[RMDB]
RNA sequence: GGGAACGACUCGAGUAGAGUCGAAAAAAAGCAAAUGAUAUGGACGCUUCACUACUGCUCUUGGACCAUCUCUCGGAAACGAGAGAUGCUAGAGCAAGUGAGAGCGUCCUAAGUCUUAACCUAUCAAGUGUAUAUCCCGGUUCGCCGGGAUAUACACAAAAGAAACAACAACAACAAC
Reactivity to 2A3 in 0.01 (KOAc 150mM, MgCl2 10mM, bicine 150mM(pH8.5), 24C), signal-to-noise 1, nucleotides 027 to 126: a000a020a000g210c170a150a190a130u160g030a020u020a070u210g020g000a010c000g010c000u060u040c040a010c020u260a080c170u030g000c000u010c010u070u110g170g040a230c070c000a030u020c000u000c000u000c020g080g020a050a100a060c000g010a010g000a010g000a000u020g000c040u010a000g010a030g030c000a010a010g000u010g000a190g000a000g000c000g000u000c000c000u000a010a000g000u000c010u030u060a080a110c030c030u150a150u300c160a300a180
Reactivity to DMS in 0.01 (KOAc 150mM, MgCl2 10mM, bicine 150mM(pH8.5), 24C), signal-to-noise 1, nucleotides 027 to 126: a040a000a000g000c060a100a090a120u000g010a060u000a300u000g040g000a020c000g020c000u000u000c030a010c000u000a150c300u000g000c010u010c000u000u000g010g000a180c300c010a000u000c000u000c000u000c000g040g000a180a030a150c020g020a020g030a010g000a000u000g020c040u000a000g000a020g040c010a050a020g010u000g000a070g000a000g000c010g030u000c000c010u010a010a070g000u010c000u000u000a070a170c020c030u000a050u000c100a130a120